The record gives the reactivity of an RNA of 177 nucleotides to 2A3 and DMS. The data come from the RNA Mapping Database (RMDB), library RFM100. The 2A3 profile rests on 747 reads.
RNA sequence: GGGAACGACUCGAGUAGAGUCGAAAAACCGAGCUAGUUGCGAGAGCUUGUAACCCGAGUGGGGGCAUUAAAGUGAUGUGAACACUGUUGUAGCGCUGCGGGCCUGGUCUGGGUGUGCUACUGCUGGGAGCUGUCUUUUUUUCGAAAAAGACAGCUCAAAAGAAACAACAACAACAAC
Reactivity to 2A3 in 0.01 (KOAc 150mM, MgCl2 10mM, bicine 150mM(pH8.5), 24C), signal-to-noise 2, nucleotides 027 to 126: a030c040c000g000a000g020c040u100a060g020u090u050g030c080g050a160g030a060g110c050u000u030g060u080a010a030c000c000c000g020a000g040u150g000g000g000g020g010c020a070u130u110a200a040a010g030u030g110a080u130g100u020g090a020a030c010a000c010u020g050u090u040g050u110a070g040c000g000c060u050g010c060g010g000g000c000c140u110g000g000u070c000u030g060g000g000u080g000u030g000c030u000a080c000u000g030c070u020g040g060
Reactivity to DMS in 0.01 (KOAc 150mM, MgCl2 10mM, bicine 150mM(pH8.5), 24C), signal-to-noise 1, nucleotides 027 to 126: a100c100c020g010a050g010c040u000a050g020u030u000g000c070g000a060g020a110g000c030u000u000g030u010a070a070c060c020c020g000a060g030u010g000g030g000g000g000c080a010u000u030a070a110a110g010u010g000a070u000g030u000g000a100a110c040a040c020u000g000u040u030g000u020a110g020c040g040c020u010g020c040g000g000g000c060c050u000g000g010u000c000u020g000g000g000u020g060u030g000c060u000a050c030u010g010c050u030g000g010